[RMDB]
RNA sequence: GGGAACGACUCGAGUAGAGUCGAAAACAGGGUGCUUGUACACUGCAGGGCAAUGCACUGCAUGACAUUUUCUGAAAGGUUCUGUACCACCAGUGUACCCGGAACUCUCUAGCCUAUAGAUUACUACCCUCAAUACUCCGUUCGCGGAGUAUUGAGGAAAAGAAACAACAACAACAAC
Reactivity to 2A3 in 0.01 (KOAc 150mM, MgCl2 10mM, bicine 150mM(pH8.5), 24C), signal-to-noise 1, nucleotides 027 to 126: c000a000g000g020g020u030g040c020u100u060g000u070a040c050a040c070u010g000c030a030g030g050g000c080a100a140u080g000c010a030c110u070g010c030a030u080g050a030c020a060u110u080u060u060c030u080g030a120a090a010g080g000u060u060c030u070g110u120a110c000c060a010c040c020a030g050u000g000u140a040c040c020c040g010g000a020a010c000u020c000u000c020u030a040g000c050c010u140a110u070a120g020a050u050u140a080c040u070a020c020
Reactivity to DMS in 0.01 (KOAc 150mM, MgCl2 10mM, bicine 150mM(pH8.5), 24C), signal-to-noise 2, nucleotides 027 to 126: c170a090g020g030g040u000g000c060u000u020g020u010a100c080a140c060u020g000c020a080g000g000g030c060a160a080u000g000c040a040c030u010g000c050a110u020g000a050c060a050u010u020u000u010c030u000g000a060a060a060g000g010u010u000c080u000g000u000a070c030c020a140c220c040a020g000u010g030u000a030c030c070c070g020g000a080a060c060u000c010u010c080u000a070g010c010c020u000a070u020a060g000a160u010u010a060c140u000a140c150